[RMDB]
Conditions: 150 mM KOAc, 10 mM MgCl2 and 150 mM bicine (pH 8.5), 24 C.
An RNA of 177 nucleotides, treated with DMS and read out base by base.
For DMS, 619 sequencing reads were counted.
DMS adducts were read by reverse transcription with MarathonRT.
Values cover nucleotides 27 to 126.
RNA sequence: GGGAACGACUCGAGUAGAGUCGAAAAGUGAUCUCUUAUGAUUGAGGAAUGCCAUAAAGCAGGUCUACUAGGAUGCAUACUUAUUAUCACUCACCAAAAGAAUAAUUCCAGUUGGUAAGAAAUAUCACUGCUGAACUCGAUUCGUCGAGUUCAGCAGAAAAGAAACAACAACAACAAC
Reactivity to DMS in 0.01 (KOAc 150mM, MgCl2 10mM, bicine 150mM(pH8.5), 24C), signal-to-noise 1, nucleotides 027 to 126: g080u000g010a060u000c080u030c040u000u000a090u010g010a120u010u000g000a070g030g000a080a070u000g010c120c040a040u000a000a100a050g050c090a000g000g040u000c010u000a020c120u000a060g000g000a090u000g010c030a070u000a090c140u000u000a060u020u000a070u000c070a060c050u000c100a060c070c090a010a040a130a170g020a080a090u000a030a080u000u000c040c000a030g040u000u000g010g000u000a040a030g000a100a080a040u000a010u010c130a090
Source information
It was measured as part of the RMDB library OK2TST. Reactivities are rounded to 0.1 and cut off at 0 and 3.